[RMDB]
RNA sequence: GGGAACGACUCGAGUAGAGUCGAAAACACCCUUUCGAGGGUGGCUGAUGCGUACUACGUGUCGACCUUUGAUCUUUAGAACUACAAAGCUCCCAAAUAGGAGCUUUGCUAAAGGGAGGUCUGACACGUAUCGCUGAUGAGGCUCUUCGGAGCCUAACGUUCAUUAAGUUUUCGAACUUAAUGAACGAAAAGAAACAACAACAACAAC
Reactivity to 2A3 in 0.01 (KOAc 150mM, MgCl2 10mM, bicine 150mM(pH8.5), 24C), signal-to-noise 4, nucleotides 027 to 156: c010a000c000c010c000u020u080u140c300g130a030g000g000g010u010g020g000c040u070g020a040u050g000c010g020u060a090c070u000a000c050g000u000g000u000c010g000a000c000c000u110u210u080g100a090u070c010u040u000u000a020g020a090a080c080u140a050c300a010a010a000g000c000u030c000c040c030a190a290a140u210a110g000g000a000g000c000u000u000u000g000c000u010a000a000a000g010g000g000a010g010g000u010c080u150g000a000c000a010c000g000u000a000u000c000g000c010u010g010a030u060g060a020g000g000c010u000c000u040u070c220g110g000a000g000c000c000u010a100a030
Reactivity to DMS in 0.01 (KOAc 150mM, MgCl2 10mM, bicine 150mM(pH8.5), 24C), signal-to-noise 3, nucleotides 027 to 156: c020a030c000c000c000u010u000u000c240g020a040g020g030g020u000g000g000c070u010g000a140u000g000c010g010u000a090c170u010a000c000g020u000g010u000c000g000a020c020c000u010u000u010g010a100u000c010u000u000u020a080g010a130a300c050u000a180c010a010a020a000g000c010u000c000c000c010a040a180a280u000a050g000g000a010g020c000u010u000u000g000c000u000a030a040a080g030g010g000a010g010g030u000c010u040g020a030c000a020c010g000u000a000u000c000g000c030u020g000a170u000g000a180g020g000c000u010c010u000u010c250g060g000a030g020c000c000u000a000a040